[RMDB]
RNA sequence: GGGAACGACUCGAGUAGAGUCGAAAACGUUCACCAUCAACUCAAUCAAAAUGACUCCCUGCUCCGCAACACCUGCUCCUGCUCCAGCGACUGCAACGGCUGCUCCUGCUCCUCUUGCGGUCACUAAGCGGUCGUAGACAUUCGUGUCUACGACCGCAAAAGAAACAACAACAACAAC
Reactivity to 2A3 in 0.01 (KOAc 150mM, MgCl2 10mM, bicine 150mM(pH8.5), 24C), signal-to-noise 2, nucleotides 027 to 126: c010g030u000u040c120a100c130c000a040u080c030a060a090c050u000c030a040a170u050c030a090a080a050a160u220g100a130c020u000c000c010c000u020g000c010u010c000c050g040c010a040a010c060a010c000c000u030g000c000u020c010c000u000g030c060u010c060c000a000g030c000g060a040c070u040g000c050a030a060c000g030g000c040u010g000c020u110c010c020u090g000c000u010c030c010u040c000u000u010g010c050g020g000u050c020a010c050u100a000a130
Annotation
Chemical mapping of a 177-nucleotide RNA with 2A3. For 2A3, 738 sequencing reads were counted. Values are in units of 0.01, from 0 to 300, in steps of 10.